[RMDB]
RNA sequence: GGGAACGACUCGAGUAGAGUCGAAAACGUUGUCAUCGACAACACCCUAUGCAUUCAUGCUCUGUAAGGAUGCGCCGAAAGGUGAGCAAGCCCGAGUUGCCUAGACCUGAAAUGCAACACUUUAGAGAAAACCCGAAGCAGUUCGCUGCUUCGGGAACGAUGUUAGAUCGUUCGCGAUCUAACAUCGAAAAGAAACAACAACAACAAC
Reactivity to DMS in 0.01 (KOAc 150mM, MgCl2 10mM, bicine 150mM(pH8.5), 24C), signal-to-noise 2, nucleotides 027 to 156: c030g000u000u000g030u010c000a090u000c100g020a090c010a030a080c020a080c030c000c030u020a090u000g030c010a070u010u020c040a240u000g080c010u000c040u010g000u010a300a270g030g000a030u040g000c020g000c080c010g000a080a100a110g050g070u010g000a100g100c010a170a190g010c030c020c060g000a220g020u000u000g000c020c030u000a040g000a070c160c010u000g000a110a020a130u010g040c040a060a070c090a120c080u000u020u000a080g030a160g000a170a040a120a070c000c000c000g010a000a040g000c000a040g010u000u010c260g010c000u000g000c000u020u000c010g000g000g000a000a000
Reactivity to 2A3 in 0.01 (KOAc 150mM, MgCl2 10mM, bicine 150mM(pH8.5), 24C), signal-to-noise 3, nucleotides 027 to 156: c080g010u000u000g010u040c110a200u150c300g020a010c000a000a000c010a080c000c000c000u040a060u040g000c000a010u010u020c030a070u200g010c000u000c000u010g020u040a000a000g000g000a000u010g000c000g000c000c000g090a070a030a020g000g000u020g020a000g000c040a030a010g050c040c050c020g100a040g020u030u020g000c010c020u050a060g040a110c010c020u050g040a050a060a050u050g030c010a010a040c020a060c100u100u140u160a140g020a010g020a040a100a030a030c000c000c000g000a010a000g010c000a000g000u050u130c160g040c070u000g000c000u000u010c020g000g000g000a000a000